[RMDB]
RNA sequence: GGGAACGACUCGAGUAGAGUCGAAAAGAUCCAUUUCGUAUACACAGACUGGACGGAAGCGACAAUCUCACUUUGUGUAACAACACACACGUAUCGGCACAUAUUCCGGGGUGCCCUUUGGGGUCGGAUCACUCGCUCAAUUCGUUGAGCGAGUGAUAAAAGAAACAACAACAACAAC
Reactivity to 2A3 in 0.01 (KOAc 150mM, MgCl2 10mM, bicine 150mM(pH8.5), 24C), signal-to-noise 1, nucleotides 027 to 126: g040a050u030c010c000a000u040u070u080c030g000u120a080u010a200c050a000c010a030g050a040c030u040g010g000a010c040g070g030a090a010g020c010g050a020c030a030a040u000c040u000c030a060c050u050u030u050g040u000g000u080a100a040c020a130a000c010a030c010a000c000a010c030g070u080a060u100c030g000g040c000a020c000a080u150a160u000u070c030c020g030g040g010g030u040g020c000c030c020u030u040u220g000g000g000g000u080c040g000g040
Reactivity to DMS in 0.01 (KOAc 150mM, MgCl2 10mM, bicine 150mM(pH8.5), 24C), signal-to-noise 2, nucleotides 027 to 126: g000a130u010c000c040a070u000u010u010c080g010u040a080u000a090c130a100c150a110g020a120c070u010g010g000a050c130g030g000a150a040g020c060g010a080c060a080a090u010c080u000c070a050c160u000u040u010g040u000g010u000a050a060c100a040a020c050a050c030a010c050a030c060g040u000a050u010c100g010g010c040a020c040a050u020a110u000u010c020c020g040g000g000g020u000g020c030c000c060u000u010u000g010g010g020g010u000c120g040g000